[RMDB]
RNA sequence: GGGAACGACUCGAGUAGAGUCGAAAAAUUUCAGCUCUCCAAAAACCUAAGCCCUCAACACGGACUCUGAAUUUAAGAGAGCCUUAGGUUCAACGCUAUAAAGGACAUUAAGCAACUAGCAUUAUUGCGUAUUAGUAUGCUUCGGCAUACUAAUACGAAAAGAAACAACAACAACAAC
Reactivity to DMS in 0.01 (KOAc 150mM, MgCl2 10mM, bicine 150mM(pH8.5), 24C), signal-to-noise 2, nucleotides 027 to 126: a070u000u020u000c080a130g000c020u000c020u000c020c030a020a110a090a100a020c070c000u010a050a080g020c010c010c000u000c040a060a060c200a120c240g010g010a140c060u000c080u000g000a120a110u000u000u010a150a140g000a030g010a050g000c140c060u000u000a020g010g000u000u010c090a030a060c140g020c010u010a050u010a080a060a070g020g000a050c060a050u020u000a040a040g010c050a030a050c110u010a020g000c040a120u000u010a090u000u000g000
Reactivity to 2A3 in 0.01 (KOAc 150mM, MgCl2 10mM, bicine 150mM(pH8.5), 24C), signal-to-noise 2, nucleotides 027 to 126: a020u110u160u050c020a010g000c030u010c010u040c070c020a000a040a020a090a060c030c010u030a030a010g000c000c010c010u060c080a020a040c040a030c110g070g070a110c000u040c040u090g080a130a130u100u170u110a080a040g020a020g000a020g000c000c000u000u020a000g000g000u000u030c010a060a060c060g000c020u010a020u070a240a110a030g070g010a040c040a120u040u120a030a000g000c030a020a040c030u110a050g000c030a090u030u140a110u190u300g030